Structure probing data (DMS and 2A3) for a 177-nucleotide construct.
For DMS, 3,089 sequencing reads were counted.
2A3 adducts were read by reverse transcription with SuperScript II with manganese.
The 2A3 profile rests on 2,725 reads.
Conditions: 150 mM KOAc, 10 mM MgCl2 and 150 mM bicine (pH 8.5), 24 C.
RNA sequence: GGGAACGACUCGAGUAGAGUCGAAAAAAUGUGAGCAAUGAUCGAAAAGUUACGUAUGUUCUUCAUAGAGAUAAAUUAUUAUGCCUUACGCCUGGUUGACCAGACUUUAGAGGUCGCUGUUCUGAGCCAUUGUAAUUCGGUUCGCCGAAUUACAAUGAAAAGAAACAACAACAACAAC
Reactivity to DMS in 0.01 (KOAc 150mM, MgCl2 10mM, bicine 150mM(pH8.5), 24C), signal-to-noise 4, nucleotides 027 to 126: a050a060u000g000u010g010a050g010c030a050a050u000g020a080u000c030g010a120a090a030a080g010u010u000a060c090g010u010a040u010g010u000u000c020u000u010c040a090u010a090g000a100g000a090u000a060a060a110u010u000a100u010u010a110u000g000c090c020u000u000a070c130g000c080c020u000g000g010u010u000g010a100c060c060a070g000a070c050u000u010u000a060g000a280g020g000u000c060g020c040u000g010u000u000c010u000g010a110g020c140
Reactivity to 2A3 in 0.01 (KOAc 150mM, MgCl2 10mM, bicine 150mM(pH8.5), 24C), signal-to-noise 2, nucleotides 027 to 126: a000a000u220g040u050g010a020g000c010a030a060u060g010a050u070c020g020a090a010a000a050g060u090u050a030c020g090u110a050u190g030u040u050c000u090u060c040a120u060a040g040a020g010a050u070a150a120a010u120u130a030u110u040a040u170g010c010c010u000u040a030c030g020c000c010u040g040g000u080u090g050a080c020c010a000g050a060c010u110u060u090a130g020a050g060g000u000c000g010c000u020g040u020u000c020u010g020a010g000c000